This 177-nucleotide RNA was probed chemically with DMS and 2A3. Conditions: 150 mM KOAc, 10 mM MgCl2 and 150 mM bicine (pH 8.5), 24 C. For DMS the reverse transcriptase was MarathonRT.
RNA sequence: GGGAACGACUCGAGUAGAGUCGAAAACUCUGUCGCCUCAGAUCAGAACCGUCGUCGCGUUUCGGGCUACAGCCUGUUGCUGGACUCUGUGAGACACCUGACCGACCGCUGAGCGACUGACUGGUCCGAACUUCUCCUUAUUCGUAAGGAGAAGUUCAAAAGAAACAACAACAACAAC
Reactivity to DMS in 0.01 (KOAc 150mM, MgCl2 10mM, bicine 150mM(pH8.5), 24C), signal-to-noise 6, nucleotides 027 to 126: c080u010c010u010g000u010c040g000c080c050u000c050a080g010a070u020c090a060g000a090a100c090c110g000u000c010g000u000c030g010c080g000u000u020u000c040g000g010g000c020u000a140c050a060g010c060c120u030g000u000u020g000c030u000g000g000a120c100u000c020u020g010u010g000a080g000a100c090a060c110c060u010g000a140c050c020g010a050c300c030g000c030u000g000a090g000c000g000a030c010u010g010a100c030u000g000g000u010c060c150
Reactivity to 2A3 in 0.01 (KOAc 150mM, MgCl2 10mM, bicine 150mM(pH8.5), 24C), signal-to-noise 9, nucleotides 027 to 126: c020u010c020u040g050u050c040g050c040c020u050c030a040g010a110u040c010a020g080a160a080c040c030g040u050c020g020u020c010g010c020g040u030u110u080c030g020g030g000c030u080a050c020a020g030c010c060u220g040u160u150g040c060u060g020g030a070c030u020c030u140g100u080g090a050g010a040c030a050c030c030u050g030a050c000c020g020a010c000c020g000c030u050g030a030g050c020g020a010c000u010g020a030c030u060g020g030u030c030c040